[RMDB]
RNA sequence: GGGAACGACUCGAGUAGAGUCGAAAAAUGGCGAAUGCAUGGGGAAAUACAUCUGUGUCGCGAGUUCGAUUCUCGCCAGGGCCUGGUCCUGUAGCUCAGUUGGUAGAGCAAGCUGUUCCCCGGACACAAAAUCCAGCUAGGUUCGCCUAGCUGGAAACUAACCUUGGGAGUUCGCUCCCAAGGUUAGAAAAGAAACAACAACAACAAC
Reactivity to 2A3 in 0.01 (KOAc 150mM, MgCl2 10mM, bicine 150mM(pH8.5), 24C), signal-to-noise 1, nucleotides 027 to 156: a000u100g040g030c070g100a040a020u100g050c050a040u090g000g010g010g050a030a130a000u220a080c040a020u060c010u030g040u010g040u160c010g030c000g000a000g010u020u020c010g000a020u000u040c030u000c000g000c000c000a000g000g000g000c030c300u100g080g000u030c000c000u030g000u030a010g010c010u000c020a060g030u160u120g130g140u140a010g000a020g050c010a000a000g000c000u030g030u070u010c010c000c000c000g000g000a010c020a000c010a040a140a000a040u000c000c010a010g000c000u000a000g010g080u030u010c190g020c030c000u000a000g000c000u000g000g000a000a000a000
Reactivity to DMS in 0.01 (KOAc 150mM, MgCl2 10mM, bicine 150mM(pH8.5), 24C), signal-to-noise 1, nucleotides 027 to 156: a040u000g000g000c050g030a100a010u020g020c060a130u020g040g040g030g010a070a110a090u000a260c060a060u010c010u010g050u000g000u010c040g170c030g020a040g030u020u000c010g000a300u010u010c040u000c020g030c060c040a060g040g030g010c010c120u030g040g040u010c020c030u000g020u010a070g070c030u000c000a020g010u000u020g010g000u000a060g060a070g020c040a250a070g030c100u000g020u000u000c010c000c030c060g030g000a070c050a060c030a040a040a150a100u000c000c000a020g000c000u000a000g010g000u030u010c300g010c050c000u000a010g030c000u000g000g000a000a020a030